Chemical mapping of a 207-nucleotide RNA with DMS and 2A3. For 2A3, 2,001 sequencing reads were counted. Source: RMDB library RSTRND, as collected in RNAgym. Values are in units of 0.01, from 0 to 300, in steps of 10.
RNA sequence: GGGAACGACUCGAGUAGAGUCGAAAAGCCUCCGCUCUUAGGACGGGGAUCAAGAGAGGUCAAACCCAAAAGAGAUCGCGUGGAUGCCCUGCCUGGGGUUGAAGCGUUAAAACUAAUCAGGCUAGUCUGGUAGUGGCGUGUCCGUCCGCAGCUGCCACUUAGCAUUAUCCUUCGGGAUAAUGCUAAGAAAAGAAACAACAACAACAAC
Reactivity to DMS in 0.01 (KOAc 150mM, MgCl2 10mM, bicine 150mM(pH8.5), 24C), signal-to-noise 1, nucleotides 027 to 156: g000c020c000u020c000c010g030c040u000c000u000u000a120g030g010a090c020g030g010g030g000a100u010c050a040a160g020a110g000a050g020g060u000c020a100a120a220c040c010c030a040a080a090a120g000a140g050a100u010c040g040c000g060u000g000g000a270u010g000c000c000c020u000g020c190c100u000g020g000g050g030u000u000g020a300a220g000c030g040u000u020a020a030a100a180c100u000a070a110u010c060a060g020g020c050u030a090g020u000c000u000g060g030u000a060g030u020g010g030c000g020u000g060u000c020c030g010u000c040c000g000c030a090g000c000u000g000c000c030a140
Reactivity to 2A3 in 0.01 (KOAc 150mM, MgCl2 10mM, bicine 150mM(pH8.5), 24C), signal-to-noise 2, nucleotides 027 to 156: g030c000c000u010c020c020g070c020u030c020u060u080a030g010g010a030c050g000g000g010g020a030u090c110a140a070g090a020g000a020g050g030u090c070a090a160a300c020c010c040a060a080a030a000g110a010g020a060u110c060g010c000g010u020g010g000a000u020g010c010c000c020u040g060c030c030u060g000g000g000g000u010u020g010a010a010g000c000g030u060u050a010a030a020a020c080u150a030a070u160c030a030g030g000c010u050a030g120u090c060u050g020g010u010a030g010u020g110g040c060g050u080g050u020c030c040g030u030c000c000g010c000a000g000c000u010g000c000c010a020